[RMDB]
Description: Chemical mapping of a 177-nucleotide RNA with DMS and 2A3. Values are in units of 0.01, from 0 to 300, in steps of 10. For DMS, 10,144 sequencing reads were counted. Values cover nucleotides 27 to 126.

RNA sequence: GGGAACGACUCGAGUAGAGUCGAAAAUUAAAUGAUGUAGUACGGCCGCCACUGAAGGACGGGUCCUCUCCGAAAGGAGAGUUGACUAGAGUGUGAGCAGGACCGGGUGCUAGUCACUGGUGAAAAAUACCUAUUUUAACUUCGGUUAAAAUAGGUAAAAAGAAACAACAACAACAAC
Reactivity to DMS in 0.01 (KOAc 150mM, MgCl2 10mM, bicine 150mM(pH8.5), 24C), signal-to-noise 6, nucleotides 027 to 126: u010u010a060a090a090u010g000a040u000g010u000a030g020u000a050c020g010g000c000c000g000c020c010a020c020u000g020a120a110g010g010a100c130g010g010g000u010c010c000u000c000u010c000c000g010a080a100a180g010g000a020g010a000g010u000u010g000a020c010u000a100g010a100g010u000g000u000g000a090g020c020a090g020g010a110c080c020g010g000g010u000g010c010u000a050g000u000c010a040c090u000g010g010u000g000a030a060a070a080a140
Reactivity to 2A3 in 0.01 (KOAc 150mM, MgCl2 10mM, bicine 150mM(pH8.5), 24C), signal-to-noise 3, nucleotides 027 to 126: u120u070a030a070a100u090g020a020u060g010u150a010g020u020a020c010g000g000c000c000g000c010c010a020c020u070g080a100a030g090g080a030c090g000g000g030u010c000c000u010c000u000c000c020g030a080a010a020g000g020a010g010a000g010u030u100g010a000c020u020a020g030a080g180u100g000u010g020a120g040c050a120g010g040a030c020c010g020g000g060u040g000c000u010a010g000u030c020a020c120u120g100g000u130g110a080a000a000a060a070